Chemical mapping of a 207-nucleotide RNA with 2A3 and DMS. DMS adducts were read by reverse transcription with MarathonRT. Conditions: 150 mM KOAc, 10 mM MgCl2 and 150 mM bicine (pH 8.5), 24 C. The DMS profile rests on 9,177 reads.
[RMDB]
RNA sequence: GGGAACGACUCGAGUAGAGUCGAAAACUUCAGUUCGCUGAAGACAUAACCGUAGGUAGCGAGGAUCAGCGAACAUCAACAGCACUCUUUCGAAAGAGAGAGUGACAUGAUGACGCUGGGAGCUACCUAAACGGGCAAACCAACUUUCGAGUUGGAAUUACUCGUAUACUUUCGAGUAUACGAGUAAAAAAGAAACAACAACAACAAC
Reactivity to 2A3 in 0.01 (KOAc 150mM, MgCl2 10mM, bicine 150mM(pH8.5), 24C), signal-to-noise 6, nucleotides 027 to 156: c000u000u000c010a050g030u060u150c210g040c120u000g010a010a000g030a010c040a100u230a050a080c000c010g020u010a010g000g000u010a000g000c000g040a230g040g020a030u020c000a010g010c000g080a080a130c000a000u000c000a010a140c030a050g060c000a000c000u000c010u000u000u000c030g080a140a130a050g000a010g000a000g010a000g000u000g060a010c000a040u050g000a010u000g010a010c010g000c000u000g000g010g000a010g000c000u000a000c000c000u000a000a010a000c010g000g020g000c030a080a110a080c000c000a010a010c010u060u140u220c270g130a030g020u000u020g020g000a020a030
Reactivity to DMS in 0.01 (KOAc 150mM, MgCl2 10mM, bicine 150mM(pH8.5), 24C), signal-to-noise 4, nucleotides 027 to 156: c020u000u000c020a050g020u010u000c250g020c030u000g000a060a030g040a140c080a130u020a060a030c010c000g010u000a020g020g010u000a010g020c010g020a120g030g000a110u010c000a010g000c000g000a120a140c020a020u000c000a020a070c070a130g010c010a000c010u010c010u030u000u000c010g000a170a170a300g010a020g010a010g010a060g030u000g010a030c080a300u010g010a020u000g010a300c010g010c010u000g010g000g010a130g010c000u000a000c000c000u000a000a010a040c030g000g030g000c050a070a070a160c000c010a010a010c020u000u000u000c170g010a130g020u000u000g010g000a080a140